[RMDB]
RNA sequence: GGGAACGACUCGAGUAGAGUCGAAAAAAGCUCAUUUUCGAAUGAGCUUGAAGCGUGAACGCAGGAUAACGCUGAAACGCGCCGCUGAACCUCCCAAGCGAAAGAUUAAGGUCUUCGGACCUUAAAACGGUGUACUGAGUUUCGACUCAGUACACCGAAAAGAAACAACAACAACAAC
Reactivity to 2A3 in 0.01 (KOAc 150mM, MgCl2 10mM, bicine 150mM(pH8.5), 24C), signal-to-noise 1, nucleotides 027 to 126: a000a010g000c000u000c000a000u010u000u060u060c150g080a050a020u010g000a000g000c000u010u010g010a010a000g020c000g000u010g020a090a000c020g000c030a060g050g150a150u070a300a040c130g000c040u030g030a040a040a000c000g010c000g040c000c030g030c020u080g060a100a070c010c050u020c030c010c000a050a000g090c030g000a090a070a030g080a000u040u040a000a000g020g000u000c010u000u090c180g050g000a010c000c030u000u000a020a020a010a010
Reactivity to DMS in 0.01 (KOAc 150mM, MgCl2 10mM, bicine 150mM(pH8.5), 24C), signal-to-noise 2, nucleotides 027 to 126: a020a010g030c000u000c000a010u010u000u000u010c130g000a030a010u000g010a020g000c000u000u000g010a030a120g020c060g000u010g000a030a150c150g000c030a040g000g030a090u010a060a100c100g000c000u000g010a150a090a080c100g020c020g000c060c040g000c030u000g000a110a090c090c070u000c000c000c010a110a090g020c090g000a100a060a080g010a170u020u000a010a000g010g000u000c000u000u010c150g020g050a000c000c000u000u000a010a010a070a140